[RMDB]
RNA sequence: GGGAACGACUCGAGUAGAGUCGAAAAGAAAGAUUUCUAUCCAGAGAGGUGGAGGGACUGGCCCUAUGAAACCUCGGCAACAUUAUUGUGCCAAUUCCAGCAAGCGCUAGCUUGAAUGAUAGGAAAAAACAGGUUGCGCGCUUCGGCGCGCAACCAAGUAGUAUCUGUACUUCGGUACAGAUACUACAAAAGAAACAACAACAACAAC
Reactivity to 2A3 in 0.01 (KOAc 150mM, MgCl2 10mM, bicine 150mM(pH8.5), 24C), signal-to-noise 1, nucleotides 027 to 156: g070a020a100a000g050a020u040u010u020c030u040a030u030c070c100a010g100a000g030a000g150g000u010g010g030a000g000g010g010a000c030u010g070g000c000c000c000u220a300u100g000a010a000a000c000c000u000c000g020g000c100a220a070c020a040u180u240a090u300u300g030u030g000c000c000a010a010u110u000c000c000a020g000c020a050a000g030c020g070c100u220a130g000c000u010u020g020a060a070u090g010a040u020a040g000g030a040a080a030a000a000a000c050a020g010g040u000u010g010c000g000c000g000c030u010u100c270g030g030c040g080c000g010c010a000a000c000c000a000a000
The record gives the reactivity of an RNA of 207 nucleotides to 2A3. The RNA was probed in 150 mM KOAc, 10 mM MgCl2 and 150 mM bicine (pH 8.5) at 24 C. Values cover nucleotides 27 to 156. For 2A3, 659 sequencing reads were counted.